[RMDB]
RNA sequence: GGGAACGACUCGAGUAGAGUCGAAAAGAGGACGGACUACUGGCUGUCUCCGGAGGCAGAGGCUGUAUCCGGUCUGCAAACACGACAGGGCUGGAAUGUCACCUGGAGUGUAGGACGUCCGAAGAGAGGGAUGCAUCUGGUUCGCCAGGUGCAUCCCAAAAGAAACAACAACAACAAC
Reactivity to 2A3 in 0.01 (KOAc 150mM, MgCl2 10mM, bicine 150mM(pH8.5), 24C), signal-to-noise 3, nucleotides 027 to 126: g160a030g010g000a000c000g000g000a000c020u010a000c020u050g170g070c050u050g050u160c020u010c030c000g050g030a040g010g000c020a010g020a100g250g110c060u060g050u100a100u030c020c000g000g000u010c020u020g010c030a070a100a030c090a030c070g140a050c040a030g000g080g000c000u040g040g070a140a080u090g050u080c030a050c060c020u030g020g010a020g040u070g000u000a000g000g000a000c000g000u000c000c010g020a050a000g060a000g030a010
Reactivity to DMS in 0.01 (KOAc 150mM, MgCl2 10mM, bicine 150mM(pH8.5), 24C), signal-to-noise 3, nucleotides 027 to 126: g020a260g000g000a000c010g010g010a090c000u000a010c110u000g000g010c030u000g010u020c020u000c030c040g000g000a070g000g000c000a050g010a170g000g000c010u010g020u060a080u010c020c030g000g000u020c010u020g010c180a060a140a130c160a090c130g000a140c020a020g000g000g000c050u000g010g040a130a110u020g010u040c020a130c010c000u030g000g000a070g000u010g010u000a010g000g010a070c000g000u000c000c010g010a160a100g000a100g010a200